[RMDB]
RNA sequence: GGGAACGACUCGAGUAGAGUCGAAAACAGAAGGCCCCAUCUAGAUGAGACAGAGCUGGUGGGGCAGGACAAAGACUCCUGGCAGCUCAAACGGCCUGGCAGAUGCUUGGAGAGAGGGGGCUUCUUGAUUUCGCAGAGAAUUCGUUCUCUGCGAAAUAAAAGAAACAACAACAACAAC
Reactivity to 2A3 in 0.01 (KOAc 150mM, MgCl2 10mM, bicine 150mM(pH8.5), 24C), signal-to-noise 3, nucleotides 027 to 126: c060a000g070a040a030g180g060c000c010c020c000a070u010c010u090a060g040a180u130g060a060g020a080c060a040g040a040g080c010u020g060g220u020g020g060g000g010c000a000g000g020a000c010a020a150a020g060a020c000u010c010c010u040g030g090c030a070g010c000u020c000a100a140a010c050g080g010c000c010u000g020g000c020a040g040a290u260g090c000u040u050g020g050a040g000a000g020a060g020g000g000g000g000c000u000u010c000u010u070g030
Reactivity to DMS in 0.01 (KOAc 150mM, MgCl2 10mM, bicine 150mM(pH8.5), 24C), signal-to-noise 3, nucleotides 027 to 126: c090a060g020a070a010g010g000c010c000c030c030a070u000c000u000a050g000a140u020g000a150g020a080c090a150g000a070g020c000u000g000g000u000g000g000g050g010c030a030g010g000a090c180a100a090a130g000a110c150u010c000c000u030g020g010c020a030g030c010u000c060a010a150a140c110g010g000c010c000u000g010g000c070a160g000a110u030g010c010u010u020g000g010a070g010a050g010a030g000g020g000g000g020c040u000u010c000u010u010g000
An RNA of 177 nucleotides, treated with 2A3 and DMS and read out base by base. The reactions ran in a buffer of 150 mM KOAc, 10 mM MgCl2 and 150 mM bicine (pH 8.5), at 24 C. For 2A3 the reverse transcriptase was SuperScript II with manganese. The DMS profile rests on 3,498 reads.